[RMDB]
RNA sequence: GGGAACGACUCGAGUAGAGUCGAAAAAGGAAAUGGGUGAUCCGCAGCCAAAUCCUAAGGACAUUUUAUUGUCUAUGGAUGCAGUUCAGCGACUAGACGGCAGUGGGUAUUGUAGAGAUAUGGGGUUAUUUAUGGCCUUAUCUACAAUGCUUAAGGUCUUUAAAGUCUGGUUCGCCAGACUUUAAAGAAAAGAAACAACAACAACAAC
Reactivity to DMS in 0.01 (KOAc 150mM, MgCl2 10mM, bicine 150mM(pH8.5), 24C), signal-to-noise 1, nucleotides 027 to 156: a060g040g010a060a110a090u010g010g000g020u000g010a130u010c000c060g000c060a200g040c000c030a050a100a060u010c000c010u010a120a270g030g010a020c000a010u000u010u010u000a040u000u040g010u010c020u000a300u010g000g000a000u010g000c070a040g010u000u010c060a040g020c030g030a040c040u000a090g020a150c020g030g000c050a100g010u000g000g010g000u010a020u010u000g000u000a040g010a040g000a180u010a100u020g030g020g010g010u000u000a090u000u000u020a130u040g000g040c000c020u000u000a130u010c010u000a030c010a000a030u010g010c000u000u010a030a100g000g020u000
Reactivity to 2A3 in 0.01 (KOAc 150mM, MgCl2 10mM, bicine 150mM(pH8.5), 24C), signal-to-noise 3, nucleotides 027 to 156: a000g080g010a030a040a020u130g020g020g000u050g020a060u040c030c040g020c050a020g030c010c000a040a070a060u050c020c000u040a080a090g030g000a000c000a010u100u190u110u230a160u270u160g000u030c010u010a030u160g000g020a000u000g020c040a010g020u040u100c030a010g020c010g070a050c020u030a020g020a050c030g030g030c020a040g030u060g020g010g000u020a000u010u000g010u000a010g000a020g020a080u040a140u300g050g010g010g020u090u050a120u090u300u100a150u250g060g000c020c000u030u000a010u000c000u000a000c010a010a000u010g010c010u020u030a060a020g000g010u000
Notes
Structure probing data (DMS and 2A3) for a 207-nucleotide construct. 2A3 adducts were read by reverse transcription with SuperScript II with manganese. Reactivities are rounded to 0.1 and cut off at 0 and 3. Source: RMDB library RSTRND, as collected in RNAgym. For 2A3, 1,396 sequencing reads were counted.